The data come from the RNA Mapping Database (RMDB), library OK1LIB. The record gives the reactivity of an RNA of 177 nucleotides to 2A3 and DMS. The RNA was probed in 150 mM KOAc, 10 mM MgCl2 and 150 mM bicine (pH 8.5) at 24 C. For 2A3, 3,634 sequencing reads were counted. Reactivities are rounded to 0.1 and cut off at 0 and 3. The DMS profile rests on 2,943 reads.
[RMDB]
RNA sequence: GGGAACGACUCGAGUAGAGUCGAAAACCGCGGCGGUUGUCCGAGAGCCGGUCAGCGACACCGCGUCCCACUCGCGGAUGCCAAGGGCAGCAAUGGCAUUGGGGUGCAACCGAACGACGCCGCGGCGAUGUCCUUCUGUGUUCGCACAGAAGGACAUAAAAGAAACAACAACAACAAC
Reactivity to 2A3 in 0.01 (KOAc 150mM, MgCl2 10mM, bicine 150mM(pH8.5), 24C), signal-to-noise 4, nucleotides 027 to 126: c000c000g000c000g000g010c020g030g060u060u040g050u130c040c020g040a060g000a000g090c040c010g020g020u100c080a070g060c020g080a060c020a020c080c040g020c000g030u070c000c000c020a050c010u060c030g090c050g070g000a030u010g000c020c030a040a110g050g030g030c020a040g030c020a060a160u090g010g000c020a010u020u080g060g000g010g030u140g050c030a030a030c000c010g030a040a040c030g020a000c030g000c000c000g000c000g010g000c020g030
Reactivity to DMS in 0.01 (KOAc 150mM, MgCl2 10mM, bicine 150mM(pH8.5), 24C), signal-to-noise 2, nucleotides 027 to 126: c080c000g010c000g010g000c010g000g020u010u010g000u000c020c000g010a130g010a260g010c030c040g000g000u000c050a120g000c010g000a040c060a110c080c040g000c120g000u010c060c060c030a100c030u020c060g060c060g000g000a080u000g010c000c050a070a100g060g010g000c020a030g000c070a160a130u010g000g000c010a100u000u020g020g010g020g010u010g010c040a150a120c040c030g000a080a030c040g000a100c050g000c000c000g000c000g000g040c120g000